The data come from the RNA Mapping Database (RMDB), library OK3TST. Structure probing data (2A3) for a 207-nucleotide construct. The reactions ran in a buffer of 150 mM KOAc, 10 mM MgCl2 and 150 mM bicine (pH 8.5), at 24 C. Values cover nucleotides 27 to 156. The 2A3 profile rests on 630 reads.
[RMDB]
RNA sequence: GGGAACGACUCGAGUAGAGUCGAAAAACAAUAACAACUGGUACCACUAGACUCAAAACAGGAAUCAAAAUACACAAUGACAACAAAGAUCCAGAACACGAAUCAUAUGCAAAUCCGCUUACAGUAUUAUCUCUGCAUUCGCCAUUAGGAAGAUAUAGACCAGAUGUCAUUUCGAUGACAUCUGGUCAAAAGAAACAACAACAACAAC
Reactivity to 2A3 in 0.01 (KOAc 150mM, MgCl2 10mM, bicine 150mM(pH8.5), 24C), signal-to-noise 2, nucleotides 027 to 156: a000c080a060a150u130a060a000c030a000a000c000u080g050g000u060a050c010c000a010c050u000a050g030a030c030u010c180a000a070a070a040c050a080g040g020a010a040u130c010a040a030a000a090u150a010c070a010c010a060a110u140g070a030c040a030a000c010a020a250a000g060a050u050c010c000a010g060a110a010c040a000c040g110a040a090u080c040a060u110a070u060g010c000a060a030a030u080c030c040g010c060u070u050a040c000a080g040u010a050u060u080a050u030c030u040c000u070g000c010a040u030u070c060g030c010c000a040u020u020a010g130g050a010a020g030a030u010a020u000a140